This 170-nucleotide RNA was probed chemically with 2A3. The data come from the RNA Mapping Database (RMDB), library 15KLIB. The reactions ran in a buffer of 150 mM KOAc, 10 mM MgCl2 and 150 mM bicine (pH 8.5), at 24 C.
[RMDB]
RNA sequence: GGGAACGACUCGAGUAGAGUCGAAAAUGGCUCUUCUUUCUGAUAAUGCCUAUCUCAAAUGGGCGCGUGUUGAAGGUAAGGACGGAUUUGUCAGUGUAGAGCUACAACCUCCUUGCAAAUUCUUGAUUGAGGUGACCGUUCGCGGUCACCAAAAGAAACAACAACAACAAC
Reactivity to 2A3 in 0.01 (KOAc 150mM, MgCl2 10mM, bicine 150mM(pH8.5), 24C), signal-to-noise 2, nucleotides 027 to 129: u090g000g000c000u000c000u050u040c020u060u060u020c050u050g040a060u090a150a010u130g030c000c000u000a000u000c170u000c020a040a040a010u080g000g000g000c000g000c000g050u070g120u090u070g040a020a000g000g090u000a000a050g020g000a000c130g000g040a010u000u010u140g000u010c040a000g000u000g090u100a040g000a000g060c000u000a010c040a010a010c020c000u000c000c010u000u040g000c010a040a070a100u130u000c020u000u050g110a120u030u020g060a060